[RMDB]
RNA sequence: GGGAACGACUCGAGUAGAGUCGAAAAGAUAUGGAGGUCAUCUAGCGGGAGUUAGCCACUCGGAAACGAGUGACUAACGAAGAACGCUAGAGUGACCUCCUAAGUCAAACUGUGGGUUCGCCCACAGGAUCUUCACUAGCUUCGGCUAGUGAAGAUCAAAAGAAACAACAACAACAAC
Reactivity to 2A3 in 0.01 (KOAc 150mM, MgCl2 10mM, bicine 150mM(pH8.5), 24C), signal-to-noise 1, nucleotides 027 to 126: g020a010u130a030u220g020g000a000g000g020u010c000a010u010c030u000a000g020c000g020g000g000a040g010u000u000a000g040c010c000a000c000u000c000g050g020a050a070a060c010g000a000g000u000g000a000c000u010a000a000c000g000a060a000g050a010a020c010g030c010u000a000g000a010g010u000g000a010c000c000u010c000c000u010a020a000g010u010c010a000a040a060c020u000g000u020g000g040g070u060u160c300g190c000c000c000a000c000a000g000
Reactivity to DMS in 0.01 (KOAc 150mM, MgCl2 10mM, bicine 150mM(pH8.5), 24C), signal-to-noise 2, nucleotides 027 to 126: g010a040u000a300u000g000g020a020g010g010u010c000a050u000c030u000a010g000c000g010g010g000a100g000u000u000a000g010c000c000a010c010u010c000g030g020a070a080a170c000g030a030g040u010g000a010c010u000a000a000c000g000a060a160g010a100a230c000g000c000u000a000g000a020g000u010g000a000c000c000u000c000c000u000a010a060g000u000c020a100a120a270c010u010g000u010g020g000g010u000u020c300g010c010c010c000a000c000a020g000

About this RNA
The record gives the reactivity of an RNA of 177 nucleotides to 2A3 and DMS. It was measured as part of the RMDB library TTRDES. The RNA was probed in 150 mM KOAc, 10 mM MgCl2 and 150 mM bicine (pH 8.5) at 24 C. For DMS the reverse transcriptase was MarathonRT. For 2A3 the reverse transcriptase was SuperScript II with manganese.